[RMDB]
RNA sequence: GGGAACGACUCGAGUAGAGUCGAAAACGCUGGGUAUGUGAGCCUAAGGGAGCUUCCUGAAGCGCGCACGGGAAGCGAAGAACUUAUGCCACAUACCUGUGCUGAAGCGCGCACGGCAACCGAAAGGUGCGAAGGCUCUCCAGUUCGCUGGAGAGAAAUGUUCAUUACGAUUCGUCGUAAUGAACAUAAAAGAAACAACAACAACAAC
Reactivity to DMS in 0.01 (KOAc 150mM, MgCl2 10mM, bicine 150mM(pH8.5), 24C), signal-to-noise 2, nucleotides 027 to 156: c060g010c050u000g020g020g020u000a020u010g010u010g030a150g040c030c080u000a060a040g010g000g020a250g010c030u000u000c000c000u000g020a060a090g040c010g020c020g040c010a300c010g000g000g010a020a010g030c010g000a060a090g010a130a170c030u000u000a010u000g010c000c020a050c010a050u000a000c000c010u010g000u000g000c010u000g020a080a070g010c030g020c030g030c020a300c040g000g000c020a080a110c040c030g000a120a130a120g030g000u000g000c010g010a110a080g000g000c010u010c000u000c000c000a030g030u000u010c300g010c010u000g020g000a020g010a010g000a010a040
Reactivity to 2A3 in 0.01 (KOAc 150mM, MgCl2 10mM, bicine 150mM(pH8.5), 24C), signal-to-noise 5, nucleotides 027 to 156: c030g000c020u030g010g000g000u000a000u000g020u010g030a070g030c010c080u060a040a040g090g030g020a140g010c000u000u000c000c010u020g040a160a090g030c030g000c020g000c020a010c000g020g000g000a010a000g000c040g060a120a020g060a040a020c020u060u030a030u160g000c010c000a000c000a000u000a000c000c000u000g000u020g000c030u050g030a110a040g010c020g000c000g000c010a010c020g020g000c020a050a060c020c010g060a110a030a010g040g000u020g000c020g030a070a040g100g010c000u000c000u000c010c000a010g010u080u070c200g070c080u000g010g010a000g000a000g000a010a090
Conditions: 150 mM KOAc, 10 mM MgCl2 and 150 mM bicine (pH 8.5), 24 C. The record gives the reactivity of an RNA of 207 nucleotides to DMS and 2A3. The 2A3 profile rests on 9,387 reads. For DMS the reverse transcriptase was MarathonRT. For 2A3 the reverse transcriptase was SuperScript II with manganese.